[RMDB]
RNA sequence: GGGAACGACUCGAGUAGAGUCGAAAAGGGGUCACCUAAGACAGCUCCUGUGGUGAGCUUGGAUUUAUACUGAAGCCUCCACGGUAUUGUCAGCUCACCCAGGAGCAAUGACGGGUGACGGAGGCACCCAAAACCUCCUCGUUUCGACGAGGAGGAAGUAGAAUUAGUGAUUCGUCACUAAUUCUACAAAAGAAACAACAACAACAAC
Reactivity to 2A3 in 0.01 (KOAc 150mM, MgCl2 10mM, bicine 150mM(pH8.5), 24C), signal-to-noise 5, nucleotides 027 to 156: g070g010g040g010u010c000a010c010c020u080a120a070g110a100c060a300g190c050u050c010c020u090g120u230g080g000u020g000a010g010c030u100u200g100g010a050u110u300u080a020u070a010c010u020g060a120a040g060c010c010u050c020c010a030c010g000g000u010a010u020u040g020u010c030a010g000c000u000c000a000c000c000c000a020g010g000a000g000c000a000a000u010g010a000c030g000g000g000u000g000a000c010g010g010a010g010g000c030a060c000c000c000a020a080a100a160c010c000u000c000c000u000c000g000u030u070u100c270g100a030c000g000a000g000g000a000g000g000a000a010
Reactivity to DMS in 0.01 (KOAc 150mM, MgCl2 10mM, bicine 150mM(pH8.5), 24C), signal-to-noise 1, nucleotides 027 to 156: g010g020g040g000u000c010a030c000c000u030a070a160g010a160c070a120g010c000u000c000c010u000g010u000g070g030u000g010a020g030c020u000u000g010g010a100u000u010u000a010u000a050c010u000g010a040a160g000c010c010u000c020c020a300c010g000g010u000a020u000u010g000u010c050a080g000c000u000c000a000c010c000c030a050g030g000a050g030c020a020a010u000g000a100c180g000g030g000u000g000a020c060g000g010a060g040g000c010a160c020c010c010a120a030a080a140c020c000u000c000c000u010c010g000u000u000u000c270g020a040c000g010a040g010g000a010g000g010a000a020
Structure probing data (2A3 and DMS) for a 207-nucleotide construct. Values cover nucleotides 27 to 156.